[RMDB]
RNA sequence: GGGAACGACUCGAGUAGAGUCGAAAAUGCAGGCGCAGCUUCGUGAAACAUUGCCACCACAUAUGGUACCGGUGGUUCUGCUGCAACUUCCACAGUUACCACUUAGCGCCAACGGCAAGCUGGAUCGGUGAUGCUACCAAUUCGUUGGUAGCAUCACAAAAGAAACAACAACAACAAC
Reactivity to 2A3 in 0.01 (KOAc 150mM, MgCl2 10mM, bicine 150mM(pH8.5), 24C), signal-to-noise 2, nucleotides 027 to 126: u080g020c000a030g040g000c070g010c080a040g010c010u090u090c100g090u020g080a090a030a000c050a050u010u100g020c000c020a030c010c000a090c040a130u230a070u180g150g000u080a070c010c070g000g020u000g000g000u020u000c000u030g060c000u000g000c010a030a050c030u110u040c020c000a030c010a060g020u080u090a060c020c000a030c030u020u080a030g000c010g020c060c020a040a020c040g000g000c030a030a030g020c030u080g030g050a080u090c040g010
Reactivity to DMS in 0.01 (KOAc 150mM, MgCl2 10mM, bicine 150mM(pH8.5), 24C), signal-to-noise 3, nucleotides 027 to 126: u000g030c050a070g030g000c190g030c030a070g010c080u000u010c090g020u000g010a110a080a080c090a070u000u010g000c030c000a100c070c030a090c170a130u010a100u000g000g000u000a060c130c130g010g020u000g010g020u000u000c040u010g000c030u020g000c040a040a070c110u030u000c020c040a050c050a050g000u000u000a080c050c000a060c080u000u000a040g020c050g000c020c000a060a140c090g000g000c010a020a100g010c060u000g010g000a110u020c080g030